The record gives the reactivity of an RNA of 207 nucleotides to 2A3.

RNA sequence: GGGAACGACUCGAGUAGAGUCGAAAAGAUUCGCCGUCGGCAUUUCCCCAGCAGCCAUGACCUACCAGGCUGCGGUGCGGCUCGCCGCACAGGUCAUCCCUCAUCGGGCGGGUCCUGCGUCCUUCCAAAAACUGACUAACCUUCGGGUUAGUCAGAACUUUCUAUUUUCGUUCGCGAAAAUAGAAAGAAAAGAAACAACAACAACAAC
Reactivity to 2A3 in 0.01 (KOAc 150mM, MgCl2 10mM, bicine 150mM(pH8.5), 24C), signal-to-noise 2, nucleotides 027 to 156: g010a100u050u080c040g010c050c080g100u070c090g060g080c090a070u050u050u090c010c000c010c000a070g020c000a000g000c020c040a180u100g020a040c010c030u150a300c050c070a010g000g000c010u010g000c010g000g000u030g000c000g010g020c060u110c180g140c020c000g000c000a010c000a000g000g020u050c010a100u120c030c000c000u070c040a110u080c050g010g000g030c020g000g020g020u020c010c040u040g040c010g030u020c000c000u050u150c030c020a060a030a040a180a170c010u000g010a000c000u000a000a000c000c010u010u050c110g050g010g000u000u000a010g000u010c000a000g000a000a000

For 2A3 the reverse transcriptase was SuperScript II with manganese. For 2A3, 1,092 sequencing reads were counted.